[RMDB]
RNA sequence: GGGAACGACUCGAGUAGAGUCGAAAAACGACCGCGUACGCGCGGUCGAUGCUACUUCUCCUGAGCCAUUCUGAGCCUCAAUCACUUGCCAGAGAGAUUGGUUCAGGAAUUUGUCAGGGAUAGCCAAUAGAAGCGAAUGUUUCGACAUUCGCUUCUAAAAAGAAACAACAACAACAAC
Reactivity to 2A3 in 0.01 (KOAc 150mM, MgCl2 10mM, bicine 150mM(pH8.5), 24C), signal-to-noise 2, nucleotides 027 to 126: a000c000g030a000c010c000g070c000g010u080a150c220g010c000g010c010g110g000u000c000g000a000u030g010c030u020a040c050u020u060c030u040c000c000u020g040a060g040c060c040a010u000u010c000u030g010a000g020c030c030u140c100a070a110u080c020a060c170u090u210g130c140c050a030g010a030g000a010g000a090u010u120g000g000u000u010c010a000g020g020a000a020u020u010u150g100u010c030a000g000g020g000a030u030a000g010c010c010a130a070
Reactivity to DMS in 0.01 (KOAc 150mM, MgCl2 10mM, bicine 150mM(pH8.5), 24C), signal-to-noise 1, nucleotides 027 to 126: a120c000g100a000c030c000g000c010g060u010a050c200g000c000g020c010g060g000u000c000g000a060u000g020c080u000a110c030u000u040c080u020c000c000u000g000a060g000c220c100a020u020u000c000u040g010a110g000c020c140u030c120a040a030u000c020a080c110u000u050g000c120c300a000g000a060g010a080g000a080u000u000g000g030u000u040c000a000g000g000a010a000u000u000u020g000u000c020a000g000g010g000a080u000a050g010c000c180a080a140
This 177-nucleotide RNA was probed chemically with 2A3 and DMS. Values cover nucleotides 27 to 126. The 2A3 profile rests on 1,266 reads. For DMS the reverse transcriptase was MarathonRT. The DMS profile rests on 1,305 reads.